[RMDB]
RNA sequence: GGGAACGACUCGAGUAGAGUCGAAAAUUAAUCGGGCUUGUUUGCGCCGCGUAUGCGCUUGCUUGCUUGCUUGCGGGCGAACGGGCUUGUUCCCUUUUGGCCCUUGCUUGCGGGCGGGCAAAAUGAAAUGUAGUCCCUAAUUCGUUAGGGACUACAUAAAAGAAACAACAACAACAAC
Reactivity to 2A3 in 0.01 (KOAc 150mM, MgCl2 10mM, bicine 150mM(pH8.5), 24C), signal-to-noise 2, nucleotides 027 to 126: u150u070a060a070u110c040g020g010g030c020u050u100g070u100u090u060g050c120g070c000c000g070c000g010u100a070u160g090c080g020c050u030u030g030c010u080u070g010c000u030u050g010c000u010u070g010c030g000g010g000c010g000a020a010c040g000g000g000c030u010u040g020u080u110c000c000c000u000u030u020u040g050g000c010c000c000u060u120g000c000u000u020g000c050g010g000g000c020g030g000g030c000a030a050a000a040u130g010a100a100
Reactivity to DMS in 0.01 (KOAc 150mM, MgCl2 10mM, bicine 150mM(pH8.5), 24C), signal-to-noise 3, nucleotides 027 to 126: u010u010a080a140u010c050g010g010g000c030u000u000g010u000u000u000g010c030g010c020c030g010c080g010u010a040u010g010c100g000c070u000u010g010c100u010u000g010c010u000u000g020c000u000u010g010c050g000g000g000c000g000a010a020c150g010g010g010c030u000u000g010u000u000c010c000c000u000u000u000u000g010g010c010c000c010u000u000g030c010u000u000g020c050g010g000g010c020g000g000g010c000a020a020a050a050u010g000a090a090

This 177-nucleotide RNA was probed chemically with 2A3 and DMS.
The 2A3 profile rests on 2,388 reads.
The DMS profile rests on 9,784 reads.
For DMS the reverse transcriptase was MarathonRT.
The data come from the RNA Mapping Database (RMDB), library M2PK90.
As a SHAPE reagent, 2A3 marks flexible, mostly unpaired nucleotides at the ribose 2'-OH.